[RMDB]
RNA sequence: GGGAACGACUCGAGUAGAGUCGAAAAGGGGUCUUCGCCUCUAGAGGUUAAGACAUGUUCUGAAGCCUCCACGGAACAACAGCUUAACUACCCACCUAGAGUGCGAAGACGGAGGCACCCAAAUCGGAUCAAUGCUCUUCGGAGCAUUGAUCCGAAACAACUUAAUAUACUUCGGUAUAUUAAGUUGAAAAGAAACAACAACAACAAC
Reactivity to 2A3 in 0.01 (KOAc 150mM, MgCl2 10mM, bicine 150mM(pH8.5), 24C), signal-to-noise 1, nucleotides 027 to 156: g050g000g020g000u000c000u010u000c000g010c000c000u000c010u010a000g020a020g020g030u010u010a040a000g030a060c150a290u250g000u010u000c020u000g040a090a020g020c000c010u020c010c000a020c020g010g010a020a000c030a040a040c070a100g100c020u000u010a000a000c000u060a060c080c140c080a080c030c000u000a010g010a000g000u190g050c000g000a000a000g000a000c030g000g000a010g000g000c000a030c000c010c000a060a130a040u030c010g040g010a000u010c030a000a000u020g000c020u000c030u060u150c270g070g010a000g000c000a000u000u000g010a020u000c030c000g010a020a000a000